Conditions: 150 mM KOAc, 10 mM MgCl2 and 150 mM bicine (pH 8.5), 24 C.
Chemical mapping of a 177-nucleotide RNA with 2A3 and DMS.
RNA sequence: GGGAACGACUCGAGUAGAGUCGAAAAAGCCCACACUGUACUGGGAGAAGGACGGGAUGGCCCUGGACGAAGUGUGGGACAGCAGCCACUUCGCGCUCCAGCCGGGCCGCGCCGAGGACGGCCCCGGUCCCGUAUCGAAAUUCGUUUCGAUACGGGAAAAAGAAACAACAACAACAAC
Reactivity to 2A3 in 0.01 (KOAc 150mM, MgCl2 10mM, bicine 150mM(pH8.5), 24C), signal-to-noise 1, nucleotides 027 to 126: a000g030c000c020c000a000c020a020c030u070g060u150a050c010u030g000g030g050a090g060a140a040g100g020a040c060g000g030g090a080u050g020g060c000c000c000u020g020g040a010c060g060a120a050g010u030g020u070g040g040g040a010c010a010g050c030a000g000c000c010a030c000u070u040c060g000c010g000c060u040c010c020a050g000c030c030g010g020g000c020c000g020c020g000c040c010g050a050g000g060a010c020g070g000c060c030c010c000g000g030
Reactivity to DMS in 0.01 (KOAc 150mM, MgCl2 10mM, bicine 150mM(pH8.5), 24C), signal-to-noise 3, nucleotides 027 to 126: a120g000c010c000c000a090c100a060c050u000g010u000a050c070u010g000g010g010a120g020a150a080g010g030a110c080g000g010g010a080u010g010g010c030c020c000u000g010g010a080c060g000a070a060g010u010g010u000g000g020g000a050c030a070g020c110a120g000c050c010a090c060u000u000c040g000c100g000c060u000c040c030a080g000c060c040g000g000g010c030c020g010c100g000c040c080g010a120g000g000a090c050g000g010c040c020c010c020g010g010